This 177-nucleotide RNA was probed chemically with 2A3 and DMS. For 2A3, 19,795 sequencing reads were counted. For 2A3 the reverse transcriptase was SuperScript II with manganese. Reactivities are rounded to 0.1 and cut off at 0 and 3. 2A3 is a SHAPE reagent: it acylates the 2'-hydroxyl of flexible nucleotides of all four kinds.
RNA sequence: GGGAACGACUCGAGUAGAGUCGAAAAAUCGGCCAGGCGCGCGCAGUACAGUACUCGAGGCCUAGGCCUGGUACAGUACAGGCCAGAUAGUGAUCAGGCCAGUACUGAUCGUAGGUACGUACGCGUAGAAGUUCAUUAGUUUCGACUAAUGAACUUCAAAAGAAACAACAACAACAAC
Reactivity to 2A3 in 0.01 (KOAc 150mM, MgCl2 10mM, bicine 150mM(pH8.5), 24C), signal-to-noise 4, nucleotides 027 to 126: a000u070c020g040g000c000c000a020g040g000c040g000c020g010c010g000c090a020g010u030a030c040a050g030u020a010c040u040c100g090a040g030g030c020c020u070a130g000g070c000c000u010g000g020u080a110c000a010g010u020a010c010a020g000g000c010c010a010g010a030u090a040g300u250g180a050u030c020a010g000g000c000c000a000g000u000a000c000u000g000a020u030c030g050u110a060g000g050u020a010c020g000u010a010c020g010c000g000u020a060
Reactivity to DMS in 0.01 (KOAc 150mM, MgCl2 10mM, bicine 150mM(pH8.5), 24C), signal-to-noise 8, nucleotides 027 to 126: a070u010c080g010g010c020c010a070g000g010c040g020c140g000c020g010c040a080g030u000a020c030a110g030u000a020c020u000c090g000a070g000g010c020c020u010a110g020g010c000c000u000g000g010u000a160c060a050g010u000a030c010a070g000g010c000c010a080g000a030u000a150g020u010g000a300u000c020a050g000g000c010c020a080g020u000a020c000u000g000a030u000c050g010u000a080g010g000u000a020c030g010u000a020c020g000c040g010u000a120